[RMDB]
RNA sequence: GGGAACGACUCGAGUAGAGUCGAAAAGUCGAGGUUCGCCUCGACAAAAAAGGGGUCUGAUGGAGGGUAAGACAUGCUCUGAAGCCUCCACGGAGCAACAGCUUACCUCCCCACCCUCAGACGGAGGCACCCAAAAAUCUCACGUUCGCGUGAGAAACACGUGAACAAGGUUCGCCUUGUUCACGUGAAAAGAAACAACAACAACAAC
Reactivity to 2A3 in 0.01 (KOAc 150mM, MgCl2 10mM, bicine 150mM(pH8.5), 24C), signal-to-noise 2, nucleotides 027 to 156: g010u010c000g000a020g030g070u070u100c160g110c070c010u040c040g000a020c030a010a010a000a010a030a010g120g000g010g010u140c180u130g100a130u180g020g040a020g060g050g030u090a080a000g030a040c090a060u130g010c000u000c000u030g060a140a040g000c000c000u000c000c020a000c000g010g020a000g000c020a030a100c040a090g130c040u100u170a090c010c040u110c010c000c000c020a140c000c000c040u060c040a070g030a060c110g000g010a000g000g000c000a020c000c010c000a000a060a040a020a020u030c000u000c010a020c030g030u080u090c300g090c020g110u020g020a000g000a010a020a010